[RMDB]
RNA sequence: GGGAACGACUCGAGUAGAGUCGAAAAGUAACUGAGUUUCAAGGAUGUAAUGCAUAACUCUGCCUAGAAACACAUUCAGAGAUAAUUAUUACAAUGUAGAAGGCUAUUAGUACAUUAACUGUUUAUUUUUUUCGAGAUAGAGUCUCGCUCUGUCGCCGAUAGGUCAAACAUUCGUGUUUGACCUAUCAAAAGAAACAACAACAACAAC
Reactivity to DMS in 0.01 (KOAc 150mM, MgCl2 10mM, bicine 150mM(pH8.5), 24C), signal-to-noise 1, nucleotides 027 to 156: g020u010a040a110c020u000g000a080g000u010u000u010c040a100a100g030g050a100u000g050u000a040a050u000g000c140a080u000a130a080c020u010c020u000g010c000c050u010a130g000a180a110a140c040a040c080a110u010u000c050a070g000a070g020a130u010a080a170u010u000a060u020u000a080c000a110a080u010g020u040a100g000a050a070g000g040c010u000a020u010u000a010g020u000a030c030a020u000u000a080a110c070u000g000u000u000u000a040u040u000u010u000u020u010u000c030g000a060g000a060u010a080g000a080g000u000c120u010c130g010c030u000c020u000g000u000c040g000c060c080
Reactivity to 2A3 in 0.01 (KOAc 150mM, MgCl2 10mM, bicine 150mM(pH8.5), 24C), signal-to-noise 5, nucleotides 027 to 156: g050u040a050a070c080u070g030a010g070u040u080u060c030a030a020g030g000a030u050g000u060a060a020u080g020c040a050u040a160a100c010u020c020u030g020c020c010u090a150g120a140a170a020c080a010c020a120u120u110c010a020g010a000g010a060u070a190a030u110u060a010u040u040a030c020a040a110u100g010u050a040g020a060a010g000g000c010u000a020u070u030a030g010u030a020c020a020u050u040a080a030c050u030g070u040u090u050a140u030u080u040u010u010u020u080c050g020a030g000a010u050a030g040a020g030u010c020u030c100g030c010u000c010u010g030u010c000g000c030c010
The data come from the RNA Mapping Database (RMDB), library OK3TST. The record gives the reactivity of an RNA of 207 nucleotides to DMS and 2A3. The RNA was probed in 150 mM KOAc, 10 mM MgCl2 and 150 mM bicine (pH 8.5) at 24 C. The 2A3 profile rests on 3,591 reads.